RNA sequence: GGGAACGACUCGAGUAGAGUCGAAAAAGAACUAGCGAUUGUAAAAGGCUGUUUGCGGUAAGAUAUGGAAUUAGCGCAAAUAGGUCCGAAUUCCUUGAUAACAUUUCGGACAACCGCGCUAAAACAAAUCCAUCUAUGUGUUCGCACAUAGAUGGAUAAAAGAAACAACAACAACAAC
Reactivity to DMS in 0.01 (KOAc 150mM, MgCl2 10mM, bicine 150mM(pH8.5), 24C), signal-to-noise 2, nucleotides 027 to 126: a090g010a050a110c050u000a070g020c030g000a090u000u020g010u010a070a070a130a100g000g000c020u000g000u000u000u010g000c030g000g000u010a020a030g010a090u010a110u000g000g000a080a140u010u010a020g010c010g010c020a020a060a120u020a050g020g010u000c000c000g000a040a030u000u000c070c140u020u000g000a060u010a140a090c220a050u020u010u000c000g000g000a020c000a040a050c140c110g010c020g010c050u000a010a000a050a090c100a030a050
Reactivity to 2A3 in 0.01 (KOAc 150mM, MgCl2 10mM, bicine 150mM(pH8.5), 24C), signal-to-noise 2, nucleotides 027 to 126: a000g060a020a010c010u010a000g000c000g080a060u060u130g070u150a080a110a050a110g110g000c000u000g020u010u020u040g050c020g060g060u060a040a030g010a160u090a110u270g060g040a060a140u050u010a030g060c000g000c030a020a040a000u090a060g040g060u000c000c010g000a000a010u070u050c030c000u050u090g060a010u080a150a010c020a180u010u040u010c000g020g010a000c030a020a010c050c040g010c000g000c000u020a000a040a000a040c030a000a120